[RMDB]
RNA sequence: GGGAACGACUCGAGUAGAGUCGAAAAAUGACUUCAUCGCUGAGGCUUACUAGAAGUGCAUUUCCUGAGGUUAACUCCCAGAAUGGGUGCUUCCACGUAGCUGGAGUGGCGUAGGAAACCGACACAACAUGCGUGACGGGUUCGCCCGUCACGCAUGAAAAGAAACAACAACAACAAC
Reactivity to 2A3 in 0.01 (KOAc 150mM, MgCl2 10mM, bicine 150mM(pH8.5), 24C), signal-to-noise 2, nucleotides 027 to 126: a000u000g070a010c020u040u020c000a010u030c030g010c100u050g100a120g080g000c010u070u130a020c060u120a170g000a000a000g020u040g010c020a020u000u030u030c040c050u040g020a090g060g000u090u110a000a080c080u070c010c000c000a000g110a100a280u170g010g070g060u010g010c040u000u000c010c000a000c120g030u020a030g000c070u010g010g010a020g000u100g010g000c010g040u000a060g020g060a100a000a050c030c050g060a000c030a000c000a300a000